RNA sequence: GGGAACGACUCGAGUAGAGUCGAAAAGAUAUGGACGUACGAACUCGUUGAAACACGAUUUCCCGCCAUCACUUCGGAAACGAAGUGAGUGGCGGGAAAUCGUGUGGAGAGUGUACGUCCUAAGUCACAGUAUAUUACCGUUCGCGGUAAUAUACUGAAAAGAAACAACAACAACAAC
Reactivity to DMS in 0.01 (KOAc 150mM, MgCl2 10mM, bicine 150mM(pH8.5), 24C), signal-to-noise 3, nucleotides 027 to 126: g000a040u010a300u010g000g010a010c000g000u000a000c010g010a150a090c010u000c000g000u000u020g010a300a150a020c000a000c000g000a040u000u000u000c000c010c000g010c000c000a070u000c000a010c010u000u000c000g010g000a120a120a290c020g020a020a000g000u000g000a020g020u000g010g000c000g000g000g000a000a000a000u000c000g010u000g000u000g000g000a030g010a020g050u000g000u000a010c000g010u000c000c010u000a000a060g010u000c020a300